Chemical mapping of a 177-nucleotide RNA with 2A3 and DMS. Conditions: 150 mM KOAc, 10 mM MgCl2 and 150 mM bicine (pH 8.5), 24 C. Source: RMDB library RFM100, as collected in RNAgym. For 2A3, 1,852 sequencing reads were counted.
[RMDB]
RNA sequence: GGGAACGACUCGAGUAGAGUCGAAAAGGUGAGAUAGAGAAAGGAUAAUGAGUAUCGUAGAUAAAUCUUCGGUUCCGAAUAGUGUAACUGUUGGUGCUGAGGUAAUCCAUCUUUAAAACCAUCGCCGUCUAGCACCUGAUUUCGAUCAGGUGCUAGAAAAAGAAACAACAACAACAAC
Reactivity to 2A3 in 0.01 (KOAc 150mM, MgCl2 10mM, bicine 150mM(pH8.5), 24C), signal-to-noise 3, nucleotides 027 to 126: g020g010u020g000a140g010a050u010a000g020a020g020a070a080a000g030g010a010u030a030a090u300g100a020g130u150a070u160c140g030u070a000g000a070u100a060a120a050u060c000u000u010c000g020g000u030u000c040c010g060a020a060u060a050g160u160g050u250a190a070c010u010g000u010u000g020g000u000g010c000u000g000a000g010g060u040a020a000u020c000c020a000u000c000u050u060u060a060a100a060a030c050c020a030u070c030g000c060c010g010
Reactivity to DMS in 0.01 (KOAc 150mM, MgCl2 10mM, bicine 150mM(pH8.5), 24C), signal-to-noise 1, nucleotides 027 to 126: g090g000u000g000a040g010a130u000a010g000a020g000a040a150a100g000g000a000u010a130a070u070g000a130g000u030a080u000c040g040u010a080g000a110u000a030a080a140u030c030u000u000c020g000g010u000u000c010c000g020a010a000u000a010g000u000g010u040a030a040c050u010g010u000u000g000g000u000g000c030u030g020a030g010g040u030a020a030u010c010c000a090u000c000u000u020u000a070a070a120a090c050c000a060u030c020g000c020c010g070